Record summary
Chemical mapping of a 177-nucleotide RNA with DMS and 2A3. The 2A3 profile rests on 1,936 reads. Conditions: 150 mM KOAc, 10 mM MgCl2 and 150 mM bicine (pH 8.5), 24 C. High 2A3 reactivity points to a flexible backbone, as in loops and unpaired stretches. Reactivities are rounded to 0.1 and cut off at 0 and 3.
[RMDB]
RNA sequence: GGGAACGACUCGAGUAGAGUCGAAAAGCCCCAACUCGCAUUGCCUGUAGAAUUUCUUUUCGAAAUUCUCUGUGUUGGGGCCCCUGACUAGAAUUGAAAAAAGCUUAUUACAAGCGCAUUUUCGUUCUUCACUUGGGUUAUUCGUAACCCAAGUGAAAAAAGAAACAACAACAACAAC
Reactivity to DMS in 0.01 (KOAc 150mM, MgCl2 10mM, bicine 150mM(pH8.5), 24C), signal-to-noise 1, nucleotides 027 to 126: g000c010c000c000c000a060a000c000u000c160g050c050a090u020u010g000c060c050u010g010u040a040g000a010a000u000u000u000c000u010u010u040u000c170g010a000a020a030u030u000c000u000c000u000g000u020g000u010u000g020g000g000g040c110c040c000c020u020g000a140c070u060a040g000a060a010u020u060g000a000a020a020a040a020a260g000c000u000u010a070u000u030a120c300a040a010g020c010g030c110a230u000u000u000u000c000g010u010u010c010
Reactivity to 2A3 in 0.01 (KOAc 150mM, MgCl2 10mM, bicine 150mM(pH8.5), 24C), signal-to-noise 4, nucleotides 027 to 126: g000c000c000c000c000a010a000c020u070c030g050c060a210u100u300g100c020c040u130g060u290a010g010a000a000u020u030u010c010u090u240u130u170c150g000a000a010a000u010u000c000u000c000u030g020u000g010u030u010g000g000g000g010c000c010c000c000u000g000a000c010u020a040g030a020a040u080u300g020a000a020a000a010a000a020g010c010u050u040a050u120u270a260c190a070a010g000c020g030c080a030u000u000u010u000c000g000u010u010c000